[RMDB]
RNA sequence: GGGAACGACUCGAGUAGAGUCGAAAACAUGCCUAUAUGAAUGUGGUGUUCAGGAGACCUGGCUUUCAUGACCCAGUACAAGCUGGUUCCAGCGUAUCACUAGGCACAGUGCACUGAGGGUUAUACACCUAUCCAAUGGGUUCGCCCAUUGGAUAGGAAAAGAAACAACAACAACAAC
Reactivity to 2A3 in 0.01 (KOAc 150mM, MgCl2 10mM, bicine 150mM(pH8.5), 24C), signal-to-noise 5, nucleotides 027 to 126: c030a050u110g000c010c030u160a150u050a030u270g180a170a030u170g040u070g080g030u060g040u130u070c030a030g020g050a060g070a070c030c010u040g050g010c000u070u140u120c080a090u110g040a080c000c010c010a020g020u030a040c050a130a040g020c020u010g030g010u050u020c020c010a010g000c010g060u030a010u130c050a030c130u040a030g000g020c020a010c040a030g080u050g030c030a020c070u030g010a100g040g050g000u060u070a100u020a090c040a020
Reactivity to DMS in 0.01 (KOAc 150mM, MgCl2 10mM, bicine 150mM(pH8.5), 24C), signal-to-noise 6, nucleotides 027 to 126: c130a120u010g010c020c010u000a090u020a110u000g000a080a070u010g010u000g010g020u000g010u010u000c080a100g010g010a060g010a060c060c020u010g010g010c140u000u000u010c100a090u010g000a110c080c010c020a050g010u000a080c220a050a090g000c010u010g010g010u000u010c040c010a050g010c080g000u000a050u000c050a030c050u010a030g010g010c030a030c090a080g020u000g020c070a090c050u000g000a100g010g000g000u000u010a110u000a120c220a130

An RNA of 177 nucleotides, treated with 2A3 and DMS and read out base by base.
For 2A3, 5,164 sequencing reads were counted.
Values cover nucleotides 27 to 126.
For DMS the reverse transcriptase was MarathonRT.
Conditions: 150 mM KOAc, 10 mM MgCl2 and 150 mM bicine (pH 8.5), 24 C.
Source: RMDB library OK2TST, as collected in RNAgym.